[RMDB]
RNA sequence: GGGAACGACUCGAGUAGAGUCGAAAAUAAAUCUUAUUCGUAAGAUUUACUUGAACGCUGCAAGCGGCAGCGCGGUCGCUUGCGCACGCACGCGCAAUAAAAAUCUGGGGACAUUCGUGUCCCCAAAGAGAUACUGUACAUUCGUGUACAGUAUCUCAAAAGAAACAACAACAACAAC
Reactivity to 2A3 in 0.01 (KOAc 150mM, MgCl2 10mM, bicine 150mM(pH8.5), 24C), signal-to-noise 4, nucleotides 027 to 126: u030a010a000a000u000c000u020u020a020u060u050c090g060u020a010a000g000a010u010u020u010a050c030u040u120g110a120a030c050g020c050u090g000c030a060a120g110c050g100g000c040a050g120c050g030c050g100g030u050c020g010c120u010u040g000c020g010c020a020c040g050c010a010c030g050c000g000c040a050a090u160a280a120a040a000a020u080c110u080g000g000g000g000a000c000a010u030u070c180g070u020g000u020c000c000c000c000a000a000a000
Reactivity to DMS in 0.01 (KOAc 150mM, MgCl2 10mM, bicine 150mM(pH8.5), 24C), signal-to-noise 3, nucleotides 027 to 126: u000a000a010a010u000c000u000u000a020u000u010c150g020u010a000a000g000a010u000u000u000a030c100u010u000g020a110a090c060g020c020u000g030c030a080a080g000c130g010g010c010a080g010c070g020c090g010g010u010c060g000c060u010u000g000c010g000c040a030c110g000c100a040c080g000c030g020c020a060a050u000a030a100a040a070a110u010c140u000g000g000g010g020a030c000a020u000u020c150g010u000g010u000c000c000c000c000a000a000a030